[RMDB]
RNA sequence: GGGAACGACUCGAGUAGAGUCGAAAAACAAAGAGAUCGAAAGAGCAAUGUGUAUCUCAUCAUCCUAGCGAAUGGUUGGGCUCGAAAGAUCGAGUGUUACCAUCACAUCCCGGACGCUAGAAAAAAAACUGGGAUAUAGAUUCGUCUAUAUCCCAGUAAAAGAAACAACAACAACAAC
Reactivity to 2A3 in 0.01 (KOAc 150mM, MgCl2 10mM, bicine 150mM(pH8.5), 24C), signal-to-noise 4, nucleotides 027 to 126: a000c050a000a130a010g030a000g000a020u040c040g100a070a120a110g110a020g090c050a060a080u100g040u020g040u100a030u020c020u000c000a100u050c010a030u040c020c010u010a000g010c010g080a080a020u020g020g000u010u030g040g040g000c000u000c010g070a160a160a070g220a220u070c010g000a020g000u140g270u130u030a010c010c000a000u040c030a020c010a120u020c010c000c000g030g010a010c020g000c020u030a010g030a090a020a010a000a000a000a000
Reactivity to DMS in 0.01 (KOAc 150mM, MgCl2 10mM, bicine 150mM(pH8.5), 24C), signal-to-noise 3, nucleotides 027 to 126: a080c100a070a090a150g030a060g020a020u000c020g010a080a110a100g000a120g000c120a060a070u010g010u000g030u000a040u000c000u000c030a080u020c170a070u000c090c010u000a030g010c020g010a180a030u020g000g020u000u000g010g010g000c000u000c010g020a020a150a070g000a080u000c010g000a030g020u010g000u010u000a040c000c010a020u000c130a050c170a120u010c030c010c000g010g010a240c010g020c010u000a010g010a010a010a000a140a110a010a110